Chemical mapping of a 207-nucleotide RNA with DMS and 2A3. The data come from the RNA Mapping Database (RMDB), library OK3TST. Conditions: 150 mM KOAc, 10 mM MgCl2 and 150 mM bicine (pH 8.5), 24 C.
[RMDB]
RNA sequence: GGGAACGACUCGAGUAGAGUCGAAAAUACAUUAUCAGAACAUGGCCUGCGGAUGGCAGGCAAUGGUCGGGCUACGCACUUUACCCACAAUUUGACCCAUUGCUCCGCAGGUAACAGGCCCCGAUUAACUAGGACCGCUUUCUGGUCACCUGGCCCCUGAGUCUGAAGUAUUCGUACUUCAGACUCAAAAAGAAACAACAACAACAAC
Reactivity to DMS in 0.01 (KOAc 150mM, MgCl2 10mM, bicine 150mM(pH8.5), 24C), signal-to-noise 2, nucleotides 027 to 156: u000a020c030a100u000u010a060u010c040a060g010a050a130c030a090u020g030g020c020c010u000g020c030g000g020a190u010g010g000c140a120g020g020c000a000a000u000g010g030u000c110g000g020g030c040u000a130c170g020c180a070c140u000u000u000a100c020c000c010a100c040a040a060u010u000u000g010a190c080c000c040a140u000u000g000c010u010c020c000g040c000a000g000g010u000a020a030c070a090g040g000c010c000c020c000g030a160u000u000a100a180c130u000a020g020g020a010c000c020g000c130u010u030u030c070u000g000g000u000c020a020c020c030u000g020g050c000c000c020c050
Reactivity to 2A3 in 0.01 (KOAc 150mM, MgCl2 10mM, bicine 150mM(pH8.5), 24C), signal-to-noise 2, nucleotides 027 to 156: u110a040c020a050u060u070a040u200c030a020g060a080a020c030a090u030g030g020c000c000u000g000c000g000g050a120u140g120g070c100a050g060g000c000a010a000u000g020g010u020c080g020g030g000c050u160a040c080g070c090a080c090u120u220u180a090c040c010c010a060c050a140a170u070u100u270g060a110c000c000c050a010u050u020g000c000u010c040c000g000c000a010g000g000u000a010a000c010a030g020g010c010c010c000c010g070a030u090u140a080a040c050u010a050g000g070a010c000c000g050c050u050u200u110c100u190g000g000u020c010a020c070c010u010g050g010c000c000c050c000